An RNA of 177 nucleotides, treated with DMS and read out base by base. Reactivities are given for positions 27 through 126. The reactions ran in a buffer of 150 mM KOAc, 10 mM MgCl2 and 150 mM bicine (pH 8.5), at 24 C.
RNA sequence: GGGAACGACUCGAGUAGAGUCGAAAAGAUAUGGAAUCCCAUCAGCAGCGAAGAACUCGGAAACGAGGGAGCUGGUGGUGAUUCCUAAGUCAAAAGGAGCCUAUGUGGUUCGCCACAUAGGCUCCAACAAGAUAACCCUGUUCGCAGGGUUAUCUUGAAAAGAAACAACAACAACAAC
Reactivity to DMS in 0.01 (KOAc 150mM, MgCl2 10mM, bicine 150mM(pH8.5), 24C), signal-to-noise 1, nucleotides 027 to 126: g010a000u000a300u000g020g020a030a030u010c000c040c000a000u000c000a010g030c000a210g070c160g010a150a090g010a170a220c000u040c000g020g020a120a080a240c000g000a070g020g000g040a300g040c000u010g000g000u000g000g000u020g000a000u000u020c010c010u000a020a020g000u010c040a010a050a130a150g030g000a030g020c000c000u000a000u000g050u030g000g000u000u010c140g010c000c000a000c000a040u000a020g030g030c000u010c000c000a050a000